[RMDB]
RNA sequence: GGGAACGACUCGAGUAGAGUCGAAAAGCAACAGCACGCUGAUGGGCUGGGCAAGGGGGCCGCAAGGCUUCCAGGCUGCAAGGGAAUUCACAUCAGCUGGUCUGGCGCCGGGUACCUUGGCGUUGGGCGAGAUCCAAGGGUGCUGGCAUUCGGCAUACACAAUAAAAUCCUUCGGGAUUUUAUUGUGAAAAGAAACAACAACAACAAC
Reactivity to DMS in 0.01 (KOAc 150mM, MgCl2 10mM, bicine 150mM(pH8.5), 24C), signal-to-noise 1, nucleotides 027 to 156: g030c030a090a040c040a030g020c050a030c040g000c000u000g000a030u010g050g010g000c030u000g000g000g020c040a110a110g020g000g000g010g030c000c000g000c290a080a150g000g000c000u000u000c000c020a140g000g010c030u000g020c050a120a140g030g010g010a160a160u000u010c090a010c020a070u000c020a050g010c030u000g010g020u000c010u000g030g000c050g000c010c010g050g010g000u000a030c090c040u000u000g020g000c000g060u000u000g010g030g010c030g000a120g000a110u000c050c080a090a160g000g010g010u000g020c000u000g010g000c090a180u010u000c000g000g040c080a150u000a300
Reactivity to 2A3 in 0.01 (KOAc 150mM, MgCl2 10mM, bicine 150mM(pH8.5), 24C), signal-to-noise 2, nucleotides 027 to 156: g010c010a010a100c010a010g010c010a010c050g000c020u020g000a010u020g010g020g010c030u020g020g000g000c020a070a090g020g000g000g000g000c000c000g000c060a060a060g000g000c000u020u020c000c000a030g060g020c000u110g090c070a070a100g010g020g110a070a060u230u180c110a050c000a180u030c010a000g010c010u030g010g020u030c000u010g010g020c000g000c000c000g040g000g030u170a110c020c000u010u130g010g010c000g040u050u040g010g000g030c030g010a020g000a030u110c060c030a050a050g060g000g020u020g020c000u000g010g030c030a090u070u090c070g050g020c040a040u100a130
Chemical mapping of a 207-nucleotide RNA with DMS and 2A3. 2A3 is a SHAPE reagent: it acylates the 2'-hydroxyl of flexible nucleotides of all four kinds. It was measured as part of the RMDB library ARCHII. DMS adducts were read by reverse transcription with MarathonRT.